An RNA of 177 nucleotides, treated with DMS and read out base by base.
[RMDB]
RNA sequence: GGGAACGACUCGAGUAGAGUCGAAAAAAAAAAGAUAUGGAUAUUGGUGGUAGGGAGAGCAAUGGUUCGGAAACGAACCAUAAAGCUCGAGGAUCUACGUAACAUCCAAUAUCCUAAGUCAAAAAAAGAUCUUAGUAAGGUUCGCCUUACUAAGAUCAAAAGAAACAACAACAACAAC
Reactivity to DMS in 0.01 (KOAc 150mM, MgCl2 10mM, bicine 150mM(pH8.5), 24C), signal-to-noise 1, nucleotides 027 to 126: a000a050a080a160a100a150g000a000u000a020u010g000g000a000u000a000u000u000g000g000u010g000g010u000a000g000g000g000a000g010a000g040c010a090a020u000g010g010u000u000c000g000g000a000a010a010c000g010a000a000c000c000a000u000a060a080a080g000c000u000c000g000a050g030g010a020u000c000u010a000c010g000u000a010a020c160a000u000c000c000a010a000u000a000u000c000c000u000a000a070g000u010c000a040a010a040a180a090a120a200